[RMDB]
RNA sequence: GGGAACGACUCGAGUAGAGUCGAAAAACAGGGAGCACUCAUCGGUAAUGGCCAGGGACUGGUAACCCAACUCGCAGGCCCGCUCUACCAGCUCUUCGGGGAAUGAGGCGCCGCGCAGGAAGGUGAAAGGAGAAAUAGACUUCGGUCUAUUUCUCCUAAAAGAAACAACAACAACAAC
Reactivity to DMS in 0.01 (KOAc 150mM, MgCl2 10mM, bicine 150mM(pH8.5), 24C), signal-to-noise 1, nucleotides 027 to 126: a030c130a090g020g000g010a030g060c070a040c060u000c030a050u000c140g000g000u000a050a140u020g010g010c010c050a110g010g000g010a060c070u000g010g000u020a060a100c010c040c060a110a140c070u000c080g020c040a130g000g010c010c020c030g020c070u000c040u000a070c130c030a140g010c080u000c040u000u020c080g000g000g000g010a050a100u010g000a050g020g010c120g010c040c020g000c070g000c110a030g020g020a110a020g000g030u000g010a060a090

Chemical mapping of a 177-nucleotide RNA with DMS. It was measured as part of the RMDB library OK2TRN. Reactivities are given for positions 27 through 126.